[RMDB]
RNA sequence: GGGAACGACUCGAGUAGAGUCGAAAACAACACAAACACACACUGUGGCCAGCUGAGGCCGAGGUAAAAUGUUAAGAUGCAGGACUAACGUAAAGUCGAGUGGCUGCACACCUCACUAGGCCGCAGCGCGGACGAAGUAAUUCGUUACUUCGUCCGCAAAAGAAACAACAACAACAAC
Reactivity to DMS in 0.01 (KOAc 150mM, MgCl2 10mM, bicine 150mM(pH8.5), 24C), signal-to-noise 5, nucleotides 027 to 126: c050a110a090c120a070c150a080a060a060c130a050c120a130c280a100c040u000g010u000g000g010c030c020a120g000c140u020g000a020g010g010c030c020g010a020g000g020u000a050a060a110a090u010g020u000u000a010a010g000a130u010g000c000a010g000g010a030c000u000a000a000c000g000u000a100a080a130g000u020c000g000a020g010u000g020g000c000u000g000c000a020c010a030c000c000u000c020a080c120u000a120g000g000c000c010g010c010a000g000c120
Reactivity to 2A3 in 0.01 (KOAc 150mM, MgCl2 10mM, bicine 150mM(pH8.5), 24C), signal-to-noise 6, nucleotides 027 to 126: c020a020a020c040a010c020a080a210a000c060a010c020a010c000a000c160u030g020u020g040g000c010c020a040g000c110u030g020a020g040g000c030c040g020a020g020g020u130a060a120a120a140u290g060u160u080a040a030g090a240u010g000c010a000g020g060a010c000u010a020a000c010g020u010a030a030a030g080u290c000g010a010g000u020g090g140c010u000g000c000a000c000a000c000c000u000c000a020c040u070a080g010g000c010c010g000c010a000g000c010
This 177-nucleotide RNA was probed chemically with DMS and 2A3. DMS adducts were read by reverse transcription with MarathonRT. The data come from the RNA Mapping Database (RMDB), library OK2TRN. Values cover nucleotides 27 to 126. The reactions ran in a buffer of 150 mM KOAc, 10 mM MgCl2 and 150 mM bicine (pH 8.5), at 24 C.